[RMDB]
RNA sequence: GGGAACGACUCGAGUAGAGUCGAAAACUCAAUGUAGGGAAUAACAUUGAAUUGAUACAAAUACCUUUUUCGGAGUAGGGAAAAACACCGAAUUGAUACAAAUACCUUUCUCAAUGUAGGGAAUAACAAAACAGGCAUCGCUUCGGCGAUGCCUGAACGUAAAACAUAACUUCGGUUAUGUUUUACGAAAAGAAACAACAACAACAAC
Reactivity to DMS in 0.01 (KOAc 150mM, MgCl2 10mM, bicine 150mM(pH8.5), 24C), signal-to-noise 2, nucleotides 027 to 156: c020u010c020a080a060u020g020u010a080g010g000g040a100a160u000a080a090c020a010u010u000g000a020a030u030u000g010a050u020a130c030a060a110a080u010a000c010c020u000u000u000u000u060c000g020g000a160g000u000a150g000g000g000a090a060a070a100a140c040a090c000c020g000a040a030u010u010g010a040u000a040c020a040a130a110u000a010c010c040u000u000u000c080u000c020a030a050u010g010u010a180g000g000g000a110a060u010a080a140c090a020a090a080a150c010a060g000g000c000a010u010c000g040c010u000u000c300g020g000c030g040a000u000g030c000c000u000g000a010a020
Reactivity to 2A3 in 0.01 (KOAc 150mM, MgCl2 10mM, bicine 150mM(pH8.5), 24C), signal-to-noise 6, nucleotides 027 to 156: c010u010c000a010a020u060g030u070a110g030g100g090a090a150u100a110a020c010a020u010u020g030a070a080u090u140g050a090u120a220c080a050a130a040u140a090c010c020u050u040u010u020u030c010g010g010a020g010u050a020g010g010g050a030a170a060a010a020c020a020c020c000g040a040a030u050u080g050a030u050a140c020a020a110a030u120a070c010c010u030u090u030c040u030c040a040a090u160g040u080a040g000g020g060a030a060u100a130a020c080a050a050a020a020c000a000g000g000c000a000u000c010g000c010u050u070c190g070g000c000g000a000u000g010c000c000u000g000a000a000
This 207-nucleotide RNA was probed chemically with DMS and 2A3. The reactions ran in a buffer of 150 mM KOAc, 10 mM MgCl2 and 150 mM bicine (pH 8.5), at 24 C. Source: RMDB library M2RFPK, as collected in RNAgym. High DMS reactivity at an A or C suggests that its Watson-Crick edge is free.